This 177-nucleotide RNA was probed chemically with 2A3 and DMS.
Conditions: 150 mM KOAc, 10 mM MgCl2 and 150 mM bicine (pH 8.5), 24 C.
For DMS the reverse transcriptase was MarathonRT.
RNA sequence: GGGAACGACUCGAGUAGAGUCGAAAAAUUUAAUAGCCAGGACGGUCACCUUUGGGGUGGUGACAAGUGUGAUCACUUGGGUGGUGGCUGUGUUUGCGGUUCUCCCAGGAAUCUCGUUUACCAGAUCAGCGAUAAUAGGAUUCGUCCUAUUAUCGCUAAAAGAAACAACAACAACAAC
Reactivity to 2A3 in 0.01 (KOAc 150mM, MgCl2 10mM, bicine 150mM(pH8.5), 24C), signal-to-noise 5, nucleotides 027 to 126: a000u120u140u140a230a180u120a040g040c010c020a010g030g010a010c000g020g000u010c000a010c000c000u070u180u230g050g000g000g010u060g000g030u040g050a020c030a050a080g200u170g020u030g130a100u100c010a000c000u010u020g130g030g050u060g030g030u020g020g000c000u000g000u020g020u020u050u050g020c050g010g030u020u010c020u000c010c000c000a010g040g060a040a040u020c030u020c060g040u020u070u090a200c060c000a040g000a090u170c070
Reactivity to DMS in 0.01 (KOAc 150mM, MgCl2 10mM, bicine 150mM(pH8.5), 24C), signal-to-noise 2, nucleotides 027 to 126: a030u040u030u020a060a080u020a090g000c010c010a030g000g000a040c040g000g040u020c030a000c020c000u000u000u010g010g000g000g010u020g000g000u000g010a050c010a140a090g000u030g000u030g020a080u020c020a030c050u010u000g000g000g000u010g000g000u000g000g000c000u000g010u020g010u020u000u000g000c090g000g000u000u010c040u000c000c020c000a200g010g010a030a060u000c050u020c030g010u010u000u010a130c050c030a080g000a060u040c180